Record summary
The data come from the RNA Mapping Database (RMDB), library OK3TST. This 207-nucleotide RNA was probed chemically with 2A3. The 2A3 profile rests on 568 reads. For 2A3 the reverse transcriptase was SuperScript II with manganese. Conditions: 150 mM KOAc, 10 mM MgCl2 and 150 mM bicine (pH 8.5), 24 C.
[RMDB]
RNA sequence: GGGAACGACUCGAGUAGAGUCGAAAACACCAAGGGUGCCGUAUCAUGCUUGAAUCGACAUUUCCACCGUGUCUACACCCGGCCGGCGUAUGCUGCUCGAGUACGCGCACGCGCCAAAGUCAAAAAACCACUACAAUCAUUAAAGGGUGAAAACGUCACUUGGGCUAGGAUUCGUCCUAGCCCAAGUAAAAGAAACAACAACAACAAC
Reactivity to 2A3 in 0.01 (KOAc 150mM, MgCl2 10mM, bicine 150mM(pH8.5), 24C), signal-to-noise 1, nucleotides 027 to 156: c110a010c030c000a050a060g130g000g010u040g050c020c050g070u160a090u170c030a040u100g040c110u050u070g090a100a030u090c060g000a000c020a120u120u070u080c110c000a070c030c040g000u000g030u110c020u020a000c020a050c060c000c000g000g000c030c060g020g000c000g010u050a030u160g040c100u090g000c080u170c090g110a070g100u060a030c080g010c010g030c000a020c030g000c010g000c020c000a000a030a000g000u080c080a000a000a030a030a050a090c020c100a030c030u130a060c050a120a120u040c000a030u070u290a120a110a060g010g050g010u000g000a020a060a020a000c020g030u040c070